[RMDB]
RNA sequence: GGGAACGACUCGAGUAGAGUCGAAAAUGUGUGAUUUAUGCGUUAUUCACGUAGCUAUGAAGUGUUUAAGAUAUUUAAUUGAAAAAGUUGGCCUACGCCCCACACAAACAACCUAUAAUUUAUGUAUGCGCGAUCAACGUAGUAGCUGGUAUGGUGACGUAUGUGGUUAUUUCGAUAACCACAUACGAAAAGAAACAACAACAACAAC
Reactivity to 2A3 in 0.01 (KOAc 150mM, MgCl2 10mM, bicine 150mM(pH8.5), 24C), signal-to-noise 4, nucleotides 027 to 156: u070g020u000g000u010g010a090u060u080u140a060u130g040c030g050u080u050a110u070u110c030a020c050g040u030a030g000c030u060a020u170g050a130a060g020u050g080u080u110u100a050a060g000a060u040a100u070u120u090a190a140u160u140g030a050a060a030a040a040g060u030u020g030g000c010c010u040a020c040g000c000c010c000c000a010c000a000c000a010a170a010c030a040a030c000c000u080a090u060a170a200u210u200u100a140u110g040u020a050u070g090c080g000c030g040a030u070c030a030a040c030g020u030a020g040u010a010g060c060u030g010g020u090a090u110g080g000u050g020a010
Reactivity to DMS in 0.01 (KOAc 150mM, MgCl2 10mM, bicine 150mM(pH8.5), 24C), signal-to-noise 2, nucleotides 027 to 156: u000g010u010g010u010g010a150u000u000u010a040u020g020c060g010u000u000a120u000u010c070a070c020g000u000a110g030c080u000a080u030g000a180a110g020u010g040u000u000u000a080a110g000a090u010a060u010u000u000a050a130u000u020g000a070a060a060a090a120g010u010u000g020g020c030c020u000a040c070g000c060c030c010c040a080c030a030c040a050a050a060c020a050a100c040c030u010a090u020a090a100u010u010u010a040u010g030u000a110u000g000c010g010c030g000a020u000c050a030a020c010g030u000a050g020u000a070g020c010u000g020g030u000a050u000g020g020u000g020a150
The record gives the reactivity of an RNA of 207 nucleotides to 2A3 and DMS. For DMS, 5,017 sequencing reads were counted. Values cover nucleotides 27 to 156. 2A3 adducts were read by reverse transcription with SuperScript II with manganese. The reactions ran in a buffer of 150 mM KOAc, 10 mM MgCl2 and 150 mM bicine (pH 8.5), at 24 C.